[RMDB]
RNA sequence: GGGAACGACUCGAGUAGAGUCGAAAAAGUCCAUAUGCCCAUCUUUGCUGCGGCGGAUGGAUGUUUAUACCCGCUAUGGAUGCCUAUUACUGAAAUGUAAUAGAUGCCUAAUACUCUCUCUCAGGGAGAGAGUUUAGAUGCCUCCAAAGCCGAUGCUGACUAAUCGCUAGUUCGCUAGCGAUUAGUCAAAAGAAACAACAACAACAAC
Reactivity to 2A3 in 0.01 (KOAc 150mM, MgCl2 10mM, bicine 150mM(pH8.5), 24C), signal-to-noise 1, nucleotides 027 to 156: a010g000u010c000c000a000u000a050u040g010c030c030c030a120u000c170u070u300u300g140c180u100g000c030g000g000c000g000g000a010u010g030g000a010u010g030u010u300u020a030u080a060c000c000c000g000c000u040a060u040g000g000a000u010g000c000c000u020a020u000u000a000c010u050g130a130a050a070u160g000u000a000a000u000a000g010a030u130g000c000c000u010a030a000u080a080c010u000c000u010c000u010c010u010c120a080g120g300g000a010g000a000g010a000g000u000u000u000a000g000a010u020g010c010c060u000c020c000a150a090a000g000c040c040g210a120u220g000c080u000